The data come from the RNA Mapping Database (RMDB), libraries RFM100 and RFMREP.
An RNA of 177 nucleotides, treated with DMS and 2A3 and read out base by base.
RNA sequence: GGGAACGACUCGAGUAGAGUCGAAAAAACCAUAGUCUCGUGCUAGUUCGGUACUAUACAGGGAAGGGAAGUCACUCGCAUACGUGUGUGUGCAUUUCUUGCUAUUGCUGCUUAGCUUCUCUAAAACAGUCUAGGACAGGUUCGCCUGUCCUAGACUAAAAGAAACAACAACAACAAC
Reactivity to DMS in 0.01 (KOAc 150mM, MgCl2 10mM, bicine 150mM(pH8.5), 24C), signal-to-noise 2, nucleotides 027 to 126: a020a080c050c010a090u010a040g000u020c050u000c060g000u000g000c120u000a050g010u000u000c060g000g020u010a040c060u000a040u020a100c100a110g000g000g010a030a030g000g000g000a050a000g000u000c040a030c030u010c030g010c030a020u010a090c210g010u000g050u030g090u000g010u000g000c160a110u000u010u000c040u000u010g000c020u000a050u020u030g090c180u000g010c020u000u030a000g030c050u000u000c000u000c010u010a060a080a050a090c200
Reactivity to 2A3 in 0.01 (KOAc 150mM, MgCl2 10mM, bicine 150mM(pH8.5), 24C), signal-to-noise 2, nucleotides 027 to 126: a000a000c030c000a040u030a030g070u050c020u030c080g100u120g040c090u070a090g160u160u090c030g000g010u010a000c000u000a000u040a060c100a040g000g000g030a050a050g030g000g000a000a010g000u000c000a020c020u030c000g000c010a010u010a100c220g050u040g000u010g000u000g010u010g010c040a000u010u000u040c020u040u050g000c000u020a070u120u200g050c060u020g000c000u090u040a000g000c000u000u000c010u000c000u070a040a030a010a050c110
DMS adducts were read by reverse transcription with MarathonRT. The RNA was probed in 150 mM KOAc, 10 mM MgCl2 and 150 mM bicine (pH 8.5) at 24 C. Values cover nucleotides 27 to 126.